[RMDB]
RNA sequence: GGGAACGACUCGAGUAGAGUCGAAAAUCACGCCAGUUCGCUGGCGUGAAAAGGUCAAGACAAAAGUCUAAAGCCAAAAGGGAAAACCCAGACCAAUGCCAAAAAGCGGUACCUUCGGGUACCGCAACUAAGGACGGUAGUUCGCUACCGUCCUUAGAAAAGAAACAACAACAACAAC
Reactivity to DMS in 0.01 (KOAc 150mM, MgCl2 10mM, bicine 150mM(pH8.5), 24C), signal-to-noise 1, nucleotides 027 to 126: u010c000a000c000g000c000c000a010g000u000u030c270g000c010u000g000g000c000g020u000g000a000a000a140a150g020g000u000c030a120a050g010a040c020a070a200a120a160g000u000c000u000a020a200a160g000c040c020a000a000a090a080g020g010g000a120a110a120a190c020c000c000a070g010a140c020c030a010a130u020g000c060c160a040a070a050a050a120g040c000g000g020u000a010c000c000u000u010c060g040g000g020u000a000c000c000g060c000a000a020
Overview
Structure probing data (DMS) for a 177-nucleotide construct. The RNA was probed in 150 mM KOAc, 10 mM MgCl2 and 150 mM bicine (pH 8.5) at 24 C. For DMS, 661 sequencing reads were counted. Reactivities are given for positions 27 through 126. For DMS the reverse transcriptase was MarathonRT. High DMS reactivity at an A or C suggests that its Watson-Crick edge is free.